Conditions: 150 mM KOAc, 10 mM MgCl2 and 150 mM bicine (pH 8.5), 24 C. The record gives the reactivity of an RNA of 177 nucleotides to DMS and 2A3. Reactivities are rounded to 0.1 and cut off at 0 and 3. 2A3 adducts were read by reverse transcription with SuperScript II with manganese. High 2A3 reactivity points to a flexible backbone, as in loops and unpaired stretches. DMS adducts were read by reverse transcription with MarathonRT.
[RMDB]
RNA sequence: GGGAACGACUCGAGUAGAGUCGAAAAGAGGUGGUAAUCUGUUAUGAGGCUGAGAAGUCUUAUAGUAAUAAAUCGUCUCAAUGCAUCAGGUUUAGAACUUACAGAUUACCUAGACUUGAUGAAGAUAGUAACUCGGUGUAUUCGUACACUGAGUUACAAAAGAAACAACAACAACAAC
Reactivity to DMS in 0.01 (KOAc 150mM, MgCl2 10mM, bicine 150mM(pH8.5), 24C), signal-to-noise 9, nucleotides 027 to 126: g010a050g000g010u000g000g020u000a010a010u000c010u010g000u010u000a010u010g000a010g020g000c000u010g000a250g000a170a010g010u000c000u000u000a010u000a010g010u020a100a100u030a060a090a060u010c000g010u000c020u000c040a070a080u030g020c020a020u000c010a020g000g010u000u000u000a020g000a080a070c160u000u020a070c030a010g010a020u000u000a010c010c000u000a030g000a010c000u000u010g000a020u000g000a160a080g010a130u030a100
Reactivity to 2A3 in 0.01 (KOAc 150mM, MgCl2 10mM, bicine 150mM(pH8.5), 24C), signal-to-noise 9, nucleotides 027 to 126: g040a010g010g030u050g000g000u000a000a000u000c000u000g010u010u010a020u040g010a000g010g000c000u010g010a010g020a110a010g010u000c000u000u010a010u010a010g100u080a030a110u050a110a130a070u040c020g070u000c010u000c040a040a110u220g030c010a010u010c010a010g010g010u010u010u020a020g000a040a040c020u040u050a030c080a010g010a020u000u000a000c000c000u000a010g010a010c000u010u020g000a010u060g020a040a040g100a080u250a050